[RMDB]
RNA sequence: GGGAACGACUCGAGUAGAGUCGAAAAUUUUACCUUCUAAGUUCUAGGAAAUGCUUAGCAUGUAUUUUCCAAAACAGUGUGUGGGCAGGUAGGAGGAAGAUUUAACCACUUACUAUUAGAGCUGUGGUUCUAAUUUGCUAUCGUUACUAAGUCAGAACCACCGAGAAAGUUUCGACUUUCUCGGUGGAAAAGAAACAACAACAACAAC
Reactivity to 2A3 in 0.01 (KOAc 150mM, MgCl2 10mM, bicine 150mM(pH8.5), 24C), signal-to-noise 1, nucleotides 027 to 156: u060u030u010u110a100c000c000u020u020c000u020a170a090g000u000u030c040u050a020g050g000a070a010a020u030g030c010u090u090a080g050c080a030u170g000u040a100u060u010u050u030c100c040a020a020a100a060c100a090g010u060g000u000g000u020g170g060g000c010a010g040g110u000a000g000g000a020g010g000a010a000g010a010u020u020u040a030a120c010c000a040c040u090u100a030c010u040a040u300u100a070g060a020g100c060u110g000u040g070g000u030u000c010u060a070a060u050u120u120g050c050u040a070u140c050g030u090u020a020c060u090a060a100g060u080c040a030g000a020a030